[RMDB]
RNA sequence: GGGAACGACUCGAGUAGAGUCGAAAACCGCAUAUAGGCGUAUUUAAAUACAUCUCAUGUUACUGUUUAACCACCAUAUAUGCGUGUCUAGUACCAUGCAAAAGGGGAUUUAAAUACAUCUCAUGUUACGCAGUACCCUCUUCGGAGGGUACUGCGUAAAAGAAACAACAACAACAAC
Reactivity to 2A3 in 0.01 (KOAc 150mM, MgCl2 10mM, bicine 150mM(pH8.5), 24C), signal-to-noise 2, nucleotides 027 to 126: c000c010g080c140a020u190a020u130a210g060g000c030g040u020a000u000u000u000a000a040a000u140a020c100a140u090c020u000c090a050u070g010u000u020a000c000u080g180u170u080u060a030a050c030c000a050c000c000a100u160a010u010a030u300g130c170g040u060g000u000c000u000a000g030u000a000c010c010a000u020g220c140a060a010a110a100g040g000g000g020a030u000u000u000a000a000a000u000a000c020a030u070c000u010c030a070u100g010u100u000